An RNA of 170 nucleotides, treated with DMS and 2A3 and read out base by base. Reactivities are given for positions 27 through 129. Conditions: 150 mM KOAc, 10 mM MgCl2 and 150 mM bicine (pH 8.5), 24 C. The data come from the RNA Mapping Database (RMDB), library 15KLIB. The DMS profile rests on 4,263 reads. DMS adducts were read by reverse transcription with MarathonRT.

RNA sequence: GGGAACGACUCGAGUAGAGUCGAAAAUGAGACUAUUCCCACACAGUUGUUCCCACUCUUAUUUGUGACUAUGGCCUUCGUUAUGUUGUUGGUUAAACACAAACACACCUUUUUGACACUUUUCUUGCUAGCACCCUGUUCGCAGGGUGCAAAAGAAACAACAACAACAAC
Reactivity to DMS in 0.01 (KOAc 150mM, MgCl2 10mM, bicine 150mM(pH8.5), 24C), signal-to-noise 2, nucleotides 027 to 129: u000g000a100g000a120c180u000a200u000u020c000c160c000a120c140a110c210a060g000u060u000g030u000u010c010c110c000a000c130u010c090u030u100a080u030u090u000g000u020g000a140c010u000a110u000g020g030c000c040u000u000c100g090u000u030a110u050g020u050u000g050u110u000g000g000u060u000a010a100a190c000a000c060a190a010a130c150a070c040a120c070c050u000u000u000u000u000g000a140c000a230c140u020u000u000u000c040u040u000g000c070u040a210
Reactivity to 2A3 in 0.01 (KOAc 150mM, MgCl2 10mM, bicine 150mM(pH8.5), 24C), signal-to-noise 2, nucleotides 027 to 129: u300g020a130g000a020c010u020a210u020u060c010c030c000a010c000a000c050a000g050u000u000g000u000u010c000c020c000a020c040u150c020u060u190a150u070u070u070g000u000g020a010c000u040a030u210g030g010c000c020u040u030c060g020u140u170a190u260g160u030u030g010u000u000g040g000u000u060a040a130a040c070a040c030a000a080a040c140a000c000a050c070c000u000u150u000u000u180g060a060c050a020c050u050u000u000u000c010u030u020g000c010u000a000